The record gives the reactivity of an RNA of 207 nucleotides to 2A3 and DMS. For DMS, 1,816 sequencing reads were counted. 2A3 is a SHAPE reagent: it acylates the 2'-hydroxyl of flexible nucleotides of all four kinds. The RNA was probed in 150 mM KOAc, 10 mM MgCl2 and 150 mM bicine (pH 8.5) at 24 C.

RNA sequence: GGGAACGACUCGAGUAGAGUCGAAAAGAUAUUACGUUUCCUUUACACUUCUCAAACCGGGAUCAAGAGAAGCAAAGCAUCCCUCAUAUCCACGAUGGAGGGUGUCGUGGAGUAUACUGUACCAAAAAGAGCGAACACGGCUUCGGCCGUGUUCGAACAUUAUCGGCUUGUUCGCAAGCCGAUAAUGAAAAGAAACAACAACAACAAC
Reactivity to 2A3 in 0.01 (KOAc 150mM, MgCl2 10mM, bicine 150mM(pH8.5), 24C), signal-to-noise 3, nucleotides 027 to 156: g090a030u180a080u190u140a050c060g010u020u020u030c020c000u050u040u070a080c040a010c000u080u040c040u020c040a150a070a060c060c080g000g020g040a030u050c050a260a030g010a010g000a030a020g050c100a030a010a010g020c010a030u010c000c020c000u080c050a080u090a020u110c000c010a010c000g000a000u020g090g090a030g030g020g030u070g010u000c000g010u000g000g000a000g010u000a000u020a050c090u070g100u210a130c030c020a030a050a050a020a000g120a030g080c000g000a000a000c000a010c010g020g000c000u050u050c150g030g000c000c000g010u000g000u010u000c000g000a000a000
Reactivity to DMS in 0.01 (KOAc 150mM, MgCl2 10mM, bicine 150mM(pH8.5), 24C), signal-to-noise 1, nucleotides 027 to 156: g010a220u000a100u010u000a040c080g000u000u000u000c000c010u000u010u000a110c000a080c000u000u000c000u000c010a040a070a180c060c130g050g060g020a090u000c060a110a300g000a060g010a030a040g020c030a050a080a080g010c060a030u010c000c000c010u000c070a070u000a100u000c080c030a100c060g010a060u000g010g020a130g000g000g040u000g000u000c000g000u000g000g000a020g000u000a080u000a030c070u010g040u010a130c090c000a020a050a000a070a090g000a160g000c010g010a000a010c000a010c000g030g040c030u010u010c260g080g000c000c000g060u000g000u000u000c010g000a030a060